[RMDB]
RNA sequence: GGGAACGACUCGAGUAGAGUCGAAAAGGCGUGUUCGCACGCCACAAAGGGGUCAGGUGUAGUUAGAUUCAACAGCUAUACUGAAGCCUCCACGGUAUAGACAUGAAUCUUGCGCAGAUACCUGACGGAGGCACCCAGCAAACCCCUUCGGGGGUAAGCGAAUAUAGUUCUUCGGAACUAUAUUCGCAAAAGAAACAACAACAACAAC
Reactivity to 2A3 in 0.01 (KOAc 150mM, MgCl2 10mM, bicine 150mM(pH8.5), 24C), signal-to-noise 3, nucleotides 027 to 156: g010g000c010g000u020g000u030u100c120g040c080a000c010g010c010c010a010c050a000a030a010g030g000g070g010u030c020a010g000g010u050g050u110a130g010u030u030a010g000a030u030u000c030a130a120c080a280g060c010u000a000u000a000c000u030g050a110a030g000c000c000u010c000c010a000c000g000g000u010a000u020a000g080a150c090a260u060g020a000a000u010c000u030u090g010c030g000c060a000g020a300u030a010c000c000u000g010a010c000g010g000a010g000g000c010a020c000c010c020a030g030c050a100a100a120c000c080c100c000u070u120c250g090g030g020g010g000u090a100a000

Chemical mapping of a 207-nucleotide RNA with 2A3. The data come from the RNA Mapping Database (RMDB), library RNAMAK. The RNA was probed in 150 mM KOAc, 10 mM MgCl2 and 150 mM bicine (pH 8.5) at 24 C.